[RMDB]
RNA sequence: GGGAACGACUCGAGUAGAGUCGAAAAUAAUUCUGAAUAAAGAAAAUAAAUACAUAAACUAUUGCGUAAUAAAAUCUAAAAAUGUAUAAAUGUAAAAUGCGUAAUGCAUAAACGCAACUUUGAGUUCGCUCGAGGAAAAGAAACAACAACAACAAC
Reactivity to 2A3 in 0.01 (KOAc 150mM, MgCl2 10mM, bicine 150mM(pH8.5), 24C), signal-to-noise 1, nucleotides 027 to 135: u270a050a200u230u040c060u100g080a110a090u300a190a190a060g070a070a230a070a040u300a140a000a100u250a070c030a030u270a070a170a080c100u250a140u230u230g010c020g030u030a020a070u120a160a240a070a060u110c140u210a180a060a010a060a040u040g040u030a100u140a060a240a000u140g070u160a130a270a060a100u120g000c050g150u140a180a040u250g080c000a000u140a100a140a020c020g000c050a040a000c060u040u050u030g030a000g010u030u000c080g030c040u030c000g030a020g050g080a100